[RMDB]
RNA sequence: GGGAACGACUCGAGUAGAGUCGAAAACAAAUGCUGGAAACAACCGGGGAGUUUUAAUUCUACAACCAAAGCUGGAACUUGAGCCAUUUUUUACUCUCCAUGAAACAAUUGCUUGUAAAGAGGUGGCACUUGACUAAAAUUUCGAUUUUAGUCAAGUAAAAGAAACAACAACAACAAC
Reactivity to DMS in 0.01 (KOAc 150mM, MgCl2 10mM, bicine 150mM(pH8.5), 24C), signal-to-noise 5, nucleotides 027 to 126: c030a070a090a080u010g010c040u010g020g010a110a100a080c040a050a100c300c150g000g010g020g010a040g020u000u010u000u000a020a100u000u010c040u000a050c080a070a110c050c040a030a080a060g010c100u010g010g000a070a130c120u000u010g000a080g010c060c060a000u000u000u010u000u010u000a020c020u000c030u000c060c030a040u000g000a120a080a060c080a030a130u000u000g000c070u000u000g010u000a050a050a070g000a040g010g020u000g000g010c120
Reactivity to 2A3 in 0.01 (KOAc 150mM, MgCl2 10mM, bicine 150mM(pH8.5), 24C), signal-to-noise 2, nucleotides 027 to 126: c010a010a120a080u160g000c030u100g060g020a180a070a030c010a020a040c030c070g070g040g090g000a040g020u000u070u120u130a080a010u070u010c020u040a070c010a060a060c030c040a030a150a040g060c090u110g000g070a040a070c020u030u070g010a020g010c000c020a000u000u010u000u060u030u110a020c010u020c000u000c030c010a060u060g040a030a140a010c030a030a080u160u090g040c020u000u100g050u090a010a080a050g060a010g010g060u010g060g000c020